[RMDB]
RNA sequence: GGGAACGACUCGAGUAGAGUCGAAAAGGGUGAGACCUAGGAACCGUAGGGGUAUUCUCAAGGGAAGCUUUUGCAGUGACGCCCAUGUAAGUGGGAUAUAACAACAGAACUCGUAUGAGUAGCCUAAUAAAUCGGACCUUCUUCGGAAGGUCCGAAACGUUUGCUUAUUGUUCGCAAUAAGCAAACGAAAAGAAACAACAACAACAAC
Reactivity to 2A3 in 0.01 (KOAc 150mM, MgCl2 10mM, bicine 150mM(pH8.5), 24C), signal-to-noise 1, nucleotides 027 to 156: g020g000g010u050g070a160g010a060c020c070u050a060g000g070a050a060c040c000g010u050a000g000g000g010g040u050a090u100u080c050u030c040a000a030g010g000g010a010a000g030c030u060u000u100u150g000c020a010g000u020g040a050c080g020c000c000c020a010u050g110u210a170a160g000u030g000g000g000a000u030a010u020a060a040c050a030a010c020a060g040a060a010c010u040c060g080u200a070u250g050a030g030u080a040g060c010c020u050a110a090u090a100a150a050u020c010g000g010a000c000c000u000u010c010u020u030c080g050g000a000a000g040g000u000c000c000g000a000a010a000